Conditions: 150 mM KOAc, 10 mM MgCl2 and 150 mM bicine (pH 8.5), 24 C. An RNA of 177 nucleotides, treated with DMS and 2A3 and read out base by base.
RNA sequence: GGGAACGACUCGAGUAGAGUCGAAAAUACGCCAAUUUCGAUUGGCGUAACACGCAAACCGGCCGAAAGGCAUUUUAUGCGUACGGUGGCGAAACCCUAAAAACGCACUGUCAUUCGUGACAGUGAAUGACAAUAAAUCUUUCGAGAUUUAUUGUCAAAAAGAAACAACAACAACAAC
Reactivity to DMS in 0.01 (KOAc 150mM, MgCl2 10mM, bicine 150mM(pH8.5), 24C), signal-to-noise 9, nucleotides 027 to 126: u000a000c000g010c000c000a000a010u000u000u020c160g010a040u000u000g000g010c000g010u000a000a060c190a080c030g010c020a020a090a060c090c080g010g010c020c030g010a070a080a140g010g010c040a040u000u000u010u010a070u010g010c080g010u000a130c080g000g010u000g000g010c010g010a080a070a140c020c000c040u010a030a060a050a070a090c280g000c000a010c000u000g000u000c000a040u000u010c200g020u000g000a010c010a010g010u000g000a030a070
Reactivity to 2A3 in 0.01 (KOAc 150mM, MgCl2 10mM, bicine 150mM(pH8.5), 24C), signal-to-noise 9, nucleotides 027 to 126: u040a000c000g000c000c000a000a010u030u070u090c190g140a020u000u010g000g000c000g000u000a000a010c020a000c010g000c010a080a190a090c020c010g080g000c030c020g120a110a050a020g070g000c010a010u050u100u030u080a110u100g020c010g010u020a060c010g030g000u020g020g010c020g010a090a100a130c020c000c000u090a110a080a030a030a010c090g000c020a000c000u000g000u010c000a020u040u050c210g100u030g000a000c000a000g000u000g020a010a070
Description:
Reactivities are rounded to 0.1 and cut off at 0 and 3. Values cover nucleotides 27 to 126. For 2A3 the reverse transcriptase was SuperScript II with manganese.